[RMDB]
Structure probing data (DMS and 2A3) for a 207-nucleotide construct. Conditions: 150 mM KOAc, 10 mM MgCl2 and 150 mM bicine (pH 8.5), 24 C.
RNA sequence: GGGAACGACUCGAGUAGAGUCGAAAAGCUCUGUAAUGGGAUGGGAUCCGAAGCCCCAUUGAGGGAUAAUACAGGCUCUCCCAUCCAACUCCUAUUCCAACACGUCCUCGUCGUACAGAGUGGUAAUUAAGGUAUAGCUCCUUCGGGAGCUAUACAACGCAAUUCAUAAGUUCGCUUAUGAAUUGCGAAAAGAAACAACAACAACAAC
Reactivity to DMS in 0.01 (KOAc 150mM, MgCl2 10mM, bicine 150mM(pH8.5), 24C), signal-to-noise 2, nucleotides 027 to 156: g020c020u000c000u000g000u010a130a080u000g000g030g000a040u000g010g030g010a080u000c020c030g010a160a180g010c010c000c000c020a200u000u000g010a250g020g000g010a140u030a090a130u000a150c100a240g000g000c020u000c050u000c030c000c000a110u020c020c030a070a030c050u050c010c040u010a090u000u020c050c040a110a120c120a090c050g010u010c030c040u000c050g010u000c060g000u030a090c040a010g000a030g020u000g020g000u010a070a130u000u000a110a190g020g000u000a000u000a030g010c000u000c000c000u000u000c300g080g030g010a030g000c000u000a000u000a000c000a050a140
Reactivity to 2A3 in 0.01 (KOAc 150mM, MgCl2 10mM, bicine 150mM(pH8.5), 24C), signal-to-noise 3, nucleotides 027 to 156: g010c000u000c010u020g040u030a120a140u160g120g000g010a000u000g000g000g000a030u230c000c030g060a030a070g050c000c000c000c000a120u120u210g070a280g020g000g020a020u080a200a040u180a180c120a030g000g000c020u000c000u000c000c000c000a000u000c020c010a000a000c000u030c010c010u010a050u150u040c020c010a090a020c030a030c150g070u080c000c040u090c070g110u020c020g010u000a000c010a010g000a020g030u020g010g040u110a130a170u210u070a110a020g070g000u000a000u000a000g000c000u000c000c000u020u060c160g040g000g020a000g000c000u000a000u000a000c000a000a000

Reactivities are given for positions 27 through 156. The data come from the RNA Mapping Database (RMDB), library M2RFPK. DMS adducts were read by reverse transcription with MarathonRT.